[RMDB]
RNA sequence: GGGAACGACUCGAGUAGAGUCGAAAAGGCUGUGUUGUGGCGGGAGCGAAACAGGAUCGACAAGGGUGUAAAGAUCGCUCUUUUACUCGGCAUGAUACCACCGUUAUCGGGUCAACAGAGUAGUUGCUAGGGGAACGGGUGUUCGCACCCGUUCCAACUGUAGAAACGGAUUCGUCCGUUUCUACAGAAAAGAAACAACAACAACAAC
Reactivity to 2A3 in 0.01 (KOAc 150mM, MgCl2 10mM, bicine 150mM(pH8.5), 24C), signal-to-noise 4, nucleotides 027 to 156: g070g010c030u020g010u010g030u160u000g030u040g030g030c040g010g010g000a000g030c040g060a030a050a000c050a040g020g070a060u070c050g030a040c060a060a080g050g020g030u070g040u130a120a100a030g060a030u050c010g010c030u030c010u010u070u030u060a100c050u020c020g000g000c030a020u070g010a020u040a050c030c010a020c030c000g110u070u050a040u080c030g000g000g030u020c010a010a020c020a030g090a010g040u100a010g000u030u020g050c040u070a040g120g060g010g010a000a000c000g000g010g000u010g010u020u030c050g000c050a000c000c020c000g000u000u000c000c000a000a000
Reactivity to DMS in 0.01 (KOAc 150mM, MgCl2 10mM, bicine 150mM(pH8.5), 24C), signal-to-noise 2, nucleotides 027 to 156: g030g030c030u010g030u020g020u000u030g050u000g010g040c030g000g000g000a080g000c060g010a120a070a100c050a090g020g000a060u000c050g000a110c050a070a120g020g020g010u010g000u000a020a060a100g000a080u000c030g000c010u000c050u010u010u010u010a050c050u010c000g030g010c010a060u000g020a100u000a090c010c010a170c010c060g010u020u000a050u000c080g000g000g030u010c020a080a110c100a090g010a070g010u000a110g010u000u000g000c000u000a170g020g000g000g010a050a020c000g010g000g020u000g020u020u010c230g010c010a020c000c010c010g030u000u010c000c000a010a020
Structure probing data (2A3 and DMS) for a 207-nucleotide construct. For DMS the reverse transcriptase was MarathonRT. DMS (dimethyl sulfate) methylates the pairing face of unpaired adenines and cytosines. The RNA was probed in 150 mM KOAc, 10 mM MgCl2 and 150 mM bicine (pH 8.5) at 24 C. Reactivities are given for positions 27 through 156.